[RMDB]
RNA sequence: GGGAACGACUCGAGUAGAGUCGAAAACAUUGUACAAGGAGACCAAGGCAGCUAGAGUUCAUAGGAUACAUACUAUACAUACUGGAGGAGAGAGCUGCACAGAGAGUCCCCCUGGAGCUCUGCAGAGGAACACGCUCAAGUAUUCAGCAAAGAUCAACUAUCGGAUUACUUUCGAGUAAUCCGAUAGAAAAGAAACAACAACAACAAC
Reactivity to DMS in 0.01 (KOAc 150mM, MgCl2 10mM, bicine 150mM(pH8.5), 24C), signal-to-noise 1, nucleotides 027 to 156: c020a090u010u010g030u010a100c070a070a120g000g000a100g020a110c040c030a040a120g040g000c000a060g020c060u000a090g060a130g010u000u000c030a170u000a090g000g010a170u000a090c110a080u000a090c100u010a070u000a080c060a090u000a100c040u030g000g010a060g020g010a180g000a110g000a040g010c050u000g070c050a050c030a090g000a070g030a110g020u000c040c030c030c020c060u000g020g020a080g050c030u000c030u000g010c040a090g000a030g010g000a050a070c040a040c040g000c010u010c030a040a070g040u010a090u010u000c030a090g000c090a060a040a070g010a080u010c010a030a150
Reactivity to 2A3 in 0.01 (KOAc 150mM, MgCl2 10mM, bicine 150mM(pH8.5), 24C), signal-to-noise 1, nucleotides 027 to 156: c010a110u070u100g040u070a040c010a030a070g060g010a030g040a090c030c030a030a010g040g000c030a000g000c030u060a010g000a020g050u070u210c030a030u060a170g000g060a010u040a110c010a010u180a080c030u060a030u010a060c030a000u060a060c010u050g100g010a010g000g010a060g030a000g010a010g090c060u050g020c170a050c030a030g130a030g000a010g040u020c010c020c000c040c020u000g010g050a010g000c020u040c000u000g000c000a010g020a040g000g020a030a010c020a000c060g020c000u000c040a000a000g010u010a080u070u070c040a040g040c020a010a040a020g160a000u240c000a010a020